[RMDB]
RNA sequence: GGGAACGACUCGAGUAGAGUCGAAAAGGUGGCAACUAUCAUCCCUCGGCGGGUGAUCGCUUCAAUCGCCAGCGUCCCAGGCAGAGCUUCAAUCAGCUGAAGCGCCACGCCUUUCGGGAGUACCGCACAAAAGAACUUCCUUCGGGAAGUUCUUUUGAAAAGAAACAACAACAACAAC
Reactivity to DMS in 0.01 (KOAc 150mM, MgCl2 10mM, bicine 150mM(pH8.5), 24C), signal-to-noise 2, nucleotides 027 to 126: g000g020u000g000g040c010a070a080c090u000a030u000c020a030u010c000c000c010u010c230g040g050c110g020g000g010u000g000a020u010c090g000c080u000u010c140a110a130u010c140g010c020c000a050g010c050g010u000c000c000c000a180g000g040c020a110g020a190g010c010u000u000c030a030a130u020c230a130g000c260u000g000a020a020g000c020g020c050c100a120c090g000c020c010u010u010u000c070g000g010g000a090g010u000a090c010c010g000c250a150
Reactivity to 2A3 in 0.01 (KOAc 150mM, MgCl2 10mM, bicine 150mM(pH8.5), 24C), signal-to-noise 1, nucleotides 027 to 126: g040g020u010g000g000c000a040a000c040u040a010u040c010a020u000c030c060c080u150c180g300g000c090g020g000g000u020g000a020u020c000g000c020u190u170c050a100a120u060c070g010c000c000a040g080c040g020u040c030c070c010a010g000g000c000a010g020a020g080c000u010u010c010a050a230u110c060a070g230c090u040g000a020a000g000c010g020c030c020a040c080g000c010c000u080u150u190c060g020g020g010a040g050u020a020c020c000g130c040a070